Chemical mapping of a 207-nucleotide RNA with 2A3 and DMS.
The 2A3 profile rests on 618 reads.
2A3 adducts were read by reverse transcription with SuperScript II with manganese.
The reactions ran in a buffer of 150 mM KOAc, 10 mM MgCl2 and 150 mM bicine (pH 8.5), at 24 C.
DMS adducts were read by reverse transcription with MarathonRT.
For DMS, 1,870 sequencing reads were counted.
[RMDB]
RNA sequence: GGGAACGACUCGAGUAGAGUCGAAAAACUAGAAUAUCCUCAGCAGGUGGCCUGGCCACUCUGGAGAAAGAAACCCAAGGAAAGUGAGCACCCAACUGGAUGCCAAGACACCCGGGUUCUGAAAAUGUGCUGUGUUCCUACCUCGGCAAGAUCACCAAAUUAUGAGGAUGUUCGCAUCCUCAUAAUUAAAAGAAACAACAACAACAAC
Reactivity to 2A3 in 0.01 (KOAc 150mM, MgCl2 10mM, bicine 150mM(pH8.5), 24C), signal-to-noise 2, nucleotides 027 to 156: a000c090u120a040g030a090a040u070a120u150c010c010u040c000a050g040c040a020g020g060u060g010g020c040c230u120g090g010c050c040a000c060u120c070u060g000g030a050g070a040a070a010g070a010a030a030c010c020c020a010a010g050g000a110a070a060g100u100g050a010g000c020a020c010c010c020a130a140c060u080g020g030a090u000g070c040c000a090a030g060a050c030a030c050c010c040g050g060g000u120u070c020u030g000a080a060a020a050u150g040u140g000c040u000g000u010g000u100u030c000c000u020a110c000c030u060c030g020g030c050a060a020g030a120u140c020a000c080c010a000
Reactivity to DMS in 0.01 (KOAc 150mM, MgCl2 10mM, bicine 150mM(pH8.5), 24C), signal-to-noise 1, nucleotides 027 to 156: a100c130u010a090g040a120a170u020a170u000c010c040u000c000a110g040c090a110g030g040u000g000g010c030c110u010g080g010c020c010a010c050u000c050u010g010g050a070g060a090a120a140g010a070a070a090c010c010c000a050a090g040g000a070a050a210g010u000g000a090g010c060a030c020c040c010a160a090c140u000g010g010a040u010g010c030c020a090a120g010a080c020a100c010c000c030g020g010g030u000u000c000u000g010a090a040a130a080u000g010u010g030c030u020g010u000g020u000u000c040c010u000a070c080c030u010c100g000g010c020a020a070g000a110u000c010a090c050c020a100